Source: RMDB library OK2TRN, as collected in RNAgym. Chemical mapping of a 177-nucleotide RNA with DMS. For DMS, 713 sequencing reads were counted. For DMS the reverse transcriptase was MarathonRT.
RNA sequence: GGGAACGACUCGAGUAGAGUCGAAAAGAGAAAACGGUUCCAUCAGAGGUUCGGUACACAAGUUCAAUCGACAUGAUGACCUCAGUAGCAGCGGAUGAUUUCGGCGCGGAUAUCUCGACGGUCGAGGUGCAACAAGGACGUUCGCGUCCUUGUUGCAAAAAGAAACAACAACAACAAC
Reactivity to DMS in 0.01 (KOAc 150mM, MgCl2 10mM, bicine 150mM(pH8.5), 24C), signal-to-noise 1, nucleotides 027 to 126: g010a280g000a160a050a050a020c070g000g010u000u000c070c050a070u000c030a030g050a200g000g000u020u000c070g020g010u040a050c080a110c150a050a100g000u040u000c160a090a050u000c060g010a060c120a160u000g000a110u000g010a090c070c010u040c100a070g000u010a050g010c000a010g020c020g010g000a090u030g010a180u000u000u010c060g000g010c050g010c020g000g000a100u000a100u020c010u010c020g010a160c100g030g010u000c010g000a050g000g000